[RMDB]
RNA sequence: GGGAACGACUCGAGUAGAGUCGAAAAGUAUCCCUAGAUGAUAAAACACCGCACAUGGCUCGUAAGAGCGGAUAAAUUAGCAAGUAAUGCAAAUUACGCGAGGUAACGCAUGGCCUAGGCUCGUUAGAAAAGGGAGAAUCCUUCGGGAUUCUCCCAAGUUAUCGAAUGAGUUCGCUCAUUCGAUAACAAAAGAAACAACAACAACAAC
Reactivity to DMS in 0.01 (KOAc 150mM, MgCl2 10mM, bicine 150mM(pH8.5), 24C), signal-to-noise 2, nucleotides 027 to 156: g010u010a100u000c000c000c010u000a110g020a070u000g000a100u000a090a140a130a190c010a080c070c010g060c060a130c080a130u010g020g040c010u030c010g000u000a170a150g010a120g000c010g010g010a070u000a070a050a150u000u000a100g030c040a080a070g020u000a050a070u000g010c090a050a090a060u000u000a000c030g000c050g010a130g000g000u000a060a030c040g000c050a050u010g000g030c020c040u000a080g010g030c000u000c060g000u000u000a100g000a060a110a110a150g010g030g020a010g020a030a030u000c010c010u000u000c300g040g030g000a010u000u000c020u030c000c000c000a000a000
Reactivity to 2A3 in 0.01 (KOAc 150mM, MgCl2 10mM, bicine 150mM(pH8.5), 24C), signal-to-noise 2, nucleotides 027 to 156: g000u010a080u050c030c000c000u030a030g120a160u110g020a020u130a130a100a010a000c060a030c000c010g050c020a050c030a120u080g130g000c020u010c020g040u080a160a020g000a000g100c040g000g000a040u120a030a070a050u090u050a010g050c040a120a090g020u080a120a030u030g020c020a030a030a100u100u070a090c030g000c030g030a010g000g080u070a040a000c070g010c040a030u060g000g020c000c010u020a030g080g000c050u050c050g070u040u030a040g030a050a130a070a010g000g000g000a000g000a000a000u000c020c010u020u040c130g010g030g000a000u010u010c000u000c000c000c000a000a000